[RMDB]
RNA sequence: GGGAACGACUCGAGUAGAGUCGAAAACUGGGCAAACUAUACCGGUCCAUUGAUGAGGUGAAGUUCCUUCAACAUCGGCAAAGUGCCAUGGAGUUGCCGUCGGCGAUGGGUGCUCCCAGUGUACUCCAAGGCGUCUGGGAGUUUGUGCAAAGGGAAGCCCAUGUAGAUGGUUCGCCAUCUACAUGGGAAAAGAAACAACAACAACAAC
Reactivity to DMS in 0.01 (KOAc 150mM, MgCl2 10mM, bicine 150mM(pH8.5), 24C), signal-to-noise 1, nucleotides 027 to 156: c040u020g000g010g050c080a090a040a120c070u020a120u000a050c030c030g040g000u000c050c070a170u000u010g020a110u010g020a060g010g010u000g000a170a100g000u000u000c020c020u000u000c050a040a130c130a070u000c000g000g000c020a090a130a070g030u000g000c000c040a080u000g020g010a100g020u010u000g010c010c000g040u000c060g000g030c000g040a130u000g000g030g030u000g000c020u010c030c000c000a070g020u000g010u000a050c010u000c030c100a050a150g000g040c050g000u000c020u000g010g000g030a120g000u000u000u000g030u000g030c000a030a060a120g000g010g010a090a170g000
Reactivity to 2A3 in 0.01 (KOAc 150mM, MgCl2 10mM, bicine 150mM(pH8.5), 24C), signal-to-noise 3, nucleotides 027 to 156: c020u030g010g010g000c050a070a050a050c070u100a050u160a270c030c020g050g040u000c030c020a010u020u140g040a030u030g040a050g030g040u080g030a110a070g090u100u070c030c020u050u050c040a070a090c020a070u080c030g030g020c050a110a100a040g050u080g090c010c010a050u080g040g000a050g020u100u060g070c030c040g080u060c070g050g030c000g050a020u070g060g010g010u040g020c000u030c010c010c010a010g000u020g040u120a130c040u020c060c040a040a090g080g000c000g060u090c040u000g030g010g000a000g000u000u080u090g060u030g030c040a040a050a030g000g000g030a010a030g020